[RMDB]
Structure probing data (2A3) for a 177-nucleotide construct. For 2A3, 501 sequencing reads were counted. The reactions ran in a buffer of 150 mM KOAc, 10 mM MgCl2 and 150 mM bicine (pH 8.5), at 24 C. 2A3 adducts were read by reverse transcription with SuperScript II with manganese. It was measured as part of the RMDB library RFM100. Values cover nucleotides 27 to 126.
RNA sequence: GGGAACGACUCGAGUAGAGUCGAAAAGCUUGGCCUUAACUCCGAGCUUACCGCGCUAAGUUUAAACCUUUAAAUAUGCGUUGUAAGCCAGUGACCGCUUGUCACAAGGGCAGAAUUGGAAAUGAUUCCGCUAUGCCUAAUUCGUUAGGCAUAGCGGAAAAGAAACAACAACAACAAC
Reactivity to 2A3 in 0.01 (KOAc 150mM, MgCl2 10mM, bicine 150mM(pH8.5), 24C), signal-to-noise 2, nucleotides 027 to 126: g070c050u210u170g090g040c010c000u070u080a060a020c030u000c030c050g070a000g010c000u000u000a000c000c000g020c000g020c000u090a070a070g070u090u000u200a250a300a300c020c000u120u010u140a020a020a000u070a060u200g000c000g050u000u000g000u000a000a000g000c000c030a030g000u000g020a030c040c070g210c270u110u230g000u000c000a000c000a030a040g030g010g000c000a000g050a140a070u110u140g060g050a000a040a000u060g050a110u090u000